Source: RMDB library OK2TST, as collected in RNAgym. Structure probing data (2A3 and DMS) for a 177-nucleotide construct. The 2A3 profile rests on 2,009 reads.
RNA sequence: GGGAACGACUCGAGUAGAGUCGAAAAUGACUUUUUGCAGGUGAAAGGCAGCAACAACAUUUUCGCCAUUGGUGACAAUGCAUUUGCUGGGUUGCCACCAACCGCCCAAGUAGCGCACCAAGAGGCAAAAUCCUCACGUAUUCGUACGUGAGGAUUUAAAAGAAACAACAACAACAAC
Reactivity to 2A3 in 0.01 (KOAc 150mM, MgCl2 10mM, bicine 150mM(pH8.5), 24C), signal-to-noise 2, nucleotides 027 to 126: u060g040a060c020u080u040u060u040u100g040c060a040g010g060u040g060a040a080a030g040g000c010a000g060c010a020a020c010a030a000c010a040u050u070u080u140c060g000c020c030a150u030u060g000g020u010g030a060c070a040a090u100g000c010a070u040u040u210g030c070u060g000g050g000u020u060g000c010c000a080c020c000a020a030c010c030g020c000c030c000a040a010g020u100a030g030c030g000c050a000c030c000a040a010g070a120g070g030c020a030
Reactivity to DMS in 0.01 (KOAc 150mM, MgCl2 10mM, bicine 150mM(pH8.5), 24C), signal-to-noise 3, nucleotides 027 to 126: u010g010a070c070u000u010u000u010u000g000c060a080g000g030u000g010a030a080a120g010g010c030a040g000c050a060a040c110a030a060c090a080u000u000u010u010c070g010c010c030a210u000u010g010g030u000g000a060c070a040a070u000g020c040a090u000u000u000g010c120u010g010g000g010u000u000g010c090c030a140c140c060a050a070c110c080g000c070c040c020a020a090g010u010a070g010c100g000c030a030c050c030a020a040g000a130g000g000c030a090